Description:
Conditions: 150 mM KOAc, 10 mM MgCl2 and 150 mM bicine (pH 8.5), 24 C. The record gives the reactivity of an RNA of 177 nucleotides to DMS and 2A3. DMS adducts were read by reverse transcription with MarathonRT. Values cover nucleotides 27 to 126. For DMS, 21,226 sequencing reads were counted. It was measured as part of the RMDB library OK2TRN. For 2A3 the reverse transcriptase was SuperScript II with manganese.
RNA sequence: GGGAACGACUCGAGUAGAGUCGAAAAGACGCGAAAUAUGUUGGCGACUGGCAACUUCCGGUGCUUGCCACGGUCUCAACUCUCACCGCCGUGUUGAUCCGGACCGACGGAUGUGUCGCCGAACCGAGGCUAUUAACUAAUUCGUUAGUUAAUAGCCAAAAGAAACAACAACAACAAC
Reactivity to DMS in 0.01 (KOAc 150mM, MgCl2 10mM, bicine 150mM(pH8.5), 24C), signal-to-noise 9, nucleotides 027 to 126: g010a130c150g020c050g010a070a100a090u010a060u010g010u000u000g010g010c020g010a050c070u000g010g000c020a040a050c080u000u000c100c080g000g000u000g020c220u000u000g000c020c000a060c030g000g000u000c050u000c030a050a090c180u000c040u000c040a110c050c090g020c080c080g000u000g010u000u000g000a090u010c160c190g000g000a030c040c020g000a050c020g000g010a090u010g020u000g010u000c010g020c010c010g010a060a080c060c090g010a200
Reactivity to 2A3 in 0.01 (KOAc 150mM, MgCl2 10mM, bicine 150mM(pH8.5), 24C), signal-to-noise 6, nucleotides 027 to 126: g070a010c030g030c040g130a030a090a070u300a090u210g090u090u050g020g010c040g020a020c020u020g020g000c000a020a030c020u160u060c050c090g190g040u060g020c060u020u020g000c000c020a020c020g000g010u020c030u010c050a020a070c020u020c010u030c050a050c050c060g090c060c070g020u060g030u080u100g060a120u060c080c030g030g000a010c000c020g040a050c010g070g040a090u140g020u010g010u040c010g000c020c000g000a020a000c020c020g020a050